Structure probing data (DMS and 2A3) for a 207-nucleotide construct. For 2A3, 6,593 sequencing reads were counted. For DMS, 20,884 sequencing reads were counted. For 2A3 the reverse transcriptase was SuperScript II with manganese. Conditions: 150 mM KOAc, 10 mM MgCl2 and 150 mM bicine (pH 8.5), 24 C.
RNA sequence: GGGAACGACUCGAGUAGAGUCGAAAAAGGCACCCUUCUAUACCAUUUUACAUACAGAGUGGCUGAGAGGUUCUCCUCAGAGCUCUGUUUGUGAACGCAGAGCUUACUGGAGAAUCGUUGUAAGAACUGCGUUCAUAGUUCUGUGAAUGGGGUGCCAACCUAGGUAAUGAUUCGUCAUUACCUAGGUAAAAGAAACAACAACAACAAC
Reactivity to DMS in 0.01 (KOAc 150mM, MgCl2 10mM, bicine 150mM(pH8.5), 24C), signal-to-noise 6, nucleotides 027 to 156: a080g020g010c000a010c000c000c010u000u000c060u000a230u000a080c050c030a110u000u000u000u000a160c080a160u010a110c040a050g010a030g050u000g000g030c020u020g000a070g010a100g020g010u010u000c040u000c030c010u000c030a070g020a300g000c010u000c000u000g010u000u000u010g020u000g030a060a060c100g010c000a020g010a100g030c000u000u000a100c040u000g030g020a140g020a090a080u000c060g010u000u000g010u000a040a040g010a020a060c020u000g030c050g010u000u000c040a040u000a040g010u000u000c050u000g010u000g010a070a090u010g010g000g020g030u000g010c010c000a000
Reactivity to 2A3 in 0.01 (KOAc 150mM, MgCl2 10mM, bicine 150mM(pH8.5), 24C), signal-to-noise 7, nucleotides 027 to 156: a000g010g000c010a010c020c030c000u050u030c110u110a190u070a090c020c030a050u030u060u040u170a030c030a050u110a030c010a010g030a010g020u060g170g100c010u020g020a010g030a040g060g130u180u100c070u060c060c010u010c010a010g000a000g020c000u010c000u000g000u010u030u070g010u000g010a010a010c010g000c010a000g020a040g020c010u000u010a010c020u090g110g040a120g150a210a120u170c040g070u100u090g010u010a000a010g000a070a060c000u010g010c020g020u010u000c000a010u020a030g020u110u080c040u050g030u010g030a040a060u040g010g000g000g000u000g000c000c000a000